[RMDB]
RNA sequence: GGGAACGACUCGAGUAGAGUCGAAAAGGGCAACAUGGCGAGAUUCAUCAAUUCAUCCUGCGCGCCCAACUGCGAGUCGCAGAAAUGGCAUGACGCCGCGACGGGCGAGAUCCGCAUCGGGAUCUUCGCGUACUCAAGUCUUCGGACUUGAGUACGCAAAAGAAACAACAACAACAAC
Reactivity to 2A3 in 0.01 (KOAc 150mM, MgCl2 10mM, bicine 150mM(pH8.5), 24C), signal-to-noise 2, nucleotides 027 to 126: g010g010g030c000a030a010c010a160u140g080g000c050g020a100g020a100u000u110c060a060u020c030a130a180u030u070c000a050u090c040c000u010g020c000g010c000g000c020c020c020a030a060c000u080g000c000g030a080g160u080c000g060c060a010g120a080a140a040u150g030g020c070a050u190g110a080c160g060c090c000g000c000g050a050c060g060g000g000c000g000a000g000a030u000c000c020g000c090a140u140c060g090g000g010a020u050c060u100u060c070
Reactivity to DMS in 0.01 (KOAc 150mM, MgCl2 10mM, bicine 150mM(pH8.5), 24C), signal-to-noise 2, nucleotides 027 to 126: g060g010g020c060a180a100c120a050u000g010g030c080g020a060g000a110u000u030c070a050u000c110a020a060u010u000c060a100u000c010c060u000g020c140g010c060g000c000c010c010a140a150c080u000g000c030g030a200g000u000c050g000c020a090g000a000a040a110u020g000g000c060a160u000g040a070c190g000c040c000g010c030g020a030c180g000g010g050c040g000a020g030a020u020c040c010g000c120a070u010c120g000g010g010a040u000c020u000u010c240